[RMDB]
RNA sequence: GGGAACGACUCGAGUAGAGUCGAAAAGGCACUGCCGGUUCGGUGGACAGGCCGGAGAUCGUGCUUGCCGGCAAGGUGCUCUCCGGCACGGUGGAAGCGGGCCGCGACCCUUGUGCGGCACUUGCGAAGUAAAAUGCUCAUUCGUGAGCAUUUUACUAAAAGAAACAACAACAACAAC
Reactivity to 2A3 in 0.01 (KOAc 150mM, MgCl2 10mM, bicine 150mM(pH8.5), 24C), signal-to-noise 3, nucleotides 027 to 126: g030g000c020a020c060u040g040c010c000g040g030u210u270c070g040g070u150g070g100a120c070a100g100g000c020c030g020g000a060g010a070u170c070g020u030g020c010u040u040g000c010c010g000g000c010a010a010g020g000u050g010c030u020c010u050c050c000g000g010c030a030c030g050g040u130g030g100a100a040g100c030g000g020g000c010c000g010c010g020a050c000c020c010u010u040g010u040g220c000g000g000c020a020c030u070u170g030c030g050a030
Reactivity to DMS in 0.01 (KOAc 150mM, MgCl2 10mM, bicine 150mM(pH8.5), 24C), signal-to-noise 5, nucleotides 027 to 126: g020g010c030a060c030u010g010c030c010g010g000u000u010c080g020g020u010g000g000a090c100a120g000g010c010c010g010g000a080g000a080u000c120g020u000g000c020u000u000g010c010c020g000g000c030a020a020g010g020u000g000c120u000c030u000c080c020g000g010c010a020c020g010g000u000g010g010a130a190g010c020g000g000g010c000c000g020c300g010a060c020c000c010u000u000g020u000g010c000g020g000c020a040c090u000u010g020c090g010a130

Chemical mapping of a 177-nucleotide RNA with 2A3 and DMS. Values cover nucleotides 27 to 126. For DMS the reverse transcriptase was MarathonRT. It was measured as part of the RMDB library OK2TRN. The RNA was probed in 150 mM KOAc, 10 mM MgCl2 and 150 mM bicine (pH 8.5) at 24 C.